An RNA of 177 nucleotides, treated with 2A3 and DMS and read out base by base. Conditions: 150 mM KOAc, 10 mM MgCl2 and 150 mM bicine (pH 8.5), 24 C. It was measured as part of the RMDB libraries RFM100 and RFMREP. Values cover nucleotides 27 to 126.

RNA sequence: GGGAACGACUCGAGUAGAGUCGAAAAUCAUAUUUUUUUGACAGCCUGCGACGCAAGCCCUCUAGCAAGAUGCAGGCCGGAGCCUGUGUCUCGUUCCCUGGGGCGAUAGCUCUUGCUGGCAGGUCUUAUUUCAGACAUGUUUCGACAUGUCUGAAAUAAAAGAAACAACAACAACAAC
Reactivity to 2A3 in 0.01 (KOAc 150mM, MgCl2 10mM, bicine 150mM(pH8.5), 24C), signal-to-noise 3, nucleotides 027 to 126: u080c070a020u060a210u130u120u040u030u050u070u070g130a060c050a010g000c000c000u010g010c030g030a050c020g010c030a030a050g020c000c000c010u040c050u040a040g060c040a080a020g000a010u000g000c010a000g010g010c000c000g090g030a070g010c000c010u000g000u010g020u010c000u000c040g000u000u000c020c000c000u000g000g000g020g010c030g030a060u100a050g030c020u000c000u050u040g020c010u040g050g000c010a020g000g040u010c000u010u000
Reactivity to DMS in 0.01 (KOAc 150mM, MgCl2 10mM, bicine 150mM(pH8.5), 24C), signal-to-noise 3, nucleotides 027 to 126: u060c110a110u040a010u000u000u000u010u030u030u010g020a150c160a200g010c010c000u010g010c000g030a140c300g000c010a040a050g000c020c010c000u010c120u000a060g040c100a060a020g000a010u010g000c000a000g010g010c010c270g020g030a100g010c000c000u000g010u000g020u010c000u000c020g030u000u000c000c010c000u010g020g020g000g030c080g000a040u030a060g000c100u010c030u010u000g000c000u020g010g010c010a010g000g030u000c030u000u030